[RMDB]
The data come from the RNA Mapping Database (RMDB), library OK2TST. This 177-nucleotide RNA was probed chemically with 2A3 and DMS. For 2A3 the reverse transcriptase was SuperScript II with manganese. As a SHAPE reagent, 2A3 marks flexible, mostly unpaired nucleotides at the ribose 2'-OH.

RNA sequence: GGGAACGACUCGAGUAGAGUCGAAAACGGAACGACCCUUAGUAAAUAGCCGUAACCUCUGCACUGAUAUUCCUAGAAUAUACGUGUAAGUCAGCGGUGUUCCUAGAAGCUCGUUACUUUAGUGACGGACGCAUGAUGGAUUCGUCCAUCAUGCGUCAAAAGAAACAACAACAACAAC
Reactivity to 2A3 in 0.01 (KOAc 150mM, MgCl2 10mM, bicine 150mM(pH8.5), 24C), signal-to-noise 2, nucleotides 027 to 126: c030g030g040a020a020c040g020a070c010c050c000u030u030a040g030u050a050a080a100u090a060g000c030c010g010u010a000a010c010c000u030c010u000g010c000a000c020u070g010a000u010a010u050u000c080c110u060a070g010a030a010u010a000u000a100c030g000u010g000u000a130a100g010u040c110a030g000c000g000g010u010g000u070u150c000c000u020a040g020a070a000g060c050u010c070g010u010u040a090c040u170u220u270a090g020u030g040a010c060g020
Reactivity to DMS in 0.01 (KOAc 150mM, MgCl2 10mM, bicine 150mM(pH8.5), 24C), signal-to-noise 2, nucleotides 027 to 126: c110g020g020a020a040c080g010a090c040c070c030u010u000a020g010u000a070a040a070u000a040g000c010c010g000u000a070a010c000c000u000c000u000g000c010a000c010u020g000a020u000a000u000u000c000c170u000a090g000a010a000u000a000u000a020c060g000u010g000u000a000a120g000u000c020a100g050c000g020g010u000g010u000u000c020c000u000a000g000a090a070g010c180u000c020g010u000u000a070c010u010u000u000a150g010u000g000a080c140g010